This 177-nucleotide RNA was probed chemically with 2A3 and DMS.
The data come from the RNA Mapping Database (RMDB), library RFMREP.
For DMS the reverse transcriptase was MarathonRT.
The RNA was probed in 150 mM KOAc, 10 mM MgCl2 and 150 mM bicine (pH 8.5) at 24 C.
[RMDB]
RNA sequence: GGGAACGACUCGAGUAGAGUCGAAAAUCACUUUGCCAAUUGGACUUAUGUCUUUAUUGGUCAUUCAAGUGGGGCAAAAGAAAUAUCCUUUUAAAACUCAGGCAAACUGGGUGUUUGUCUUGGAUCCGAUUGUAGUUUACUUCGGUAAACUACAAUCAAAAGAAACAACAACAACAAC
Reactivity to 2A3 in 0.01 (KOAc 150mM, MgCl2 10mM, bicine 150mM(pH8.5), 24C), signal-to-noise 3, nucleotides 027 to 126: u060c000a000c020u040u030u070g000c000c000a010a000u010u020g010g010a010c020u260u290a110u300g000u000c000u050u240u040a020u020u020g000g060u050c050a070u120u160c070a020a010g020u010g000g000g040g000c020a060a040a020a060g070a020a160a000u130a050u070c000c000u050u080u040u090a060a170a020a040c040u040c020a000g010g000c010a040a040a020c030u060g190g110g140u100g050u030u030u000g000u000c000u000u030g050g030a050u060c040c080
Reactivity to DMS in 0.01 (KOAc 150mM, MgCl2 10mM, bicine 150mM(pH8.5), 24C), signal-to-noise 3, nucleotides 027 to 126: u000c010a030c030u000u000u000g010c000c010a020a010u000u000g000g010a030c010u010u010a160u020g010u000c000u000u010u000a010u000u000g010g010u010c170a060u010u000c200a030a010g040u000g010g020g020g020c090a040a030a040a070g000a070a070a080u000a060u010c030c010u010u000u010u010a050a070a100a090c070u000c050a020g000g010c060a040a040a110c000u000g020g010g020u000g000u000u000u000g020u000c050u010u010g020g010a080u010c200c140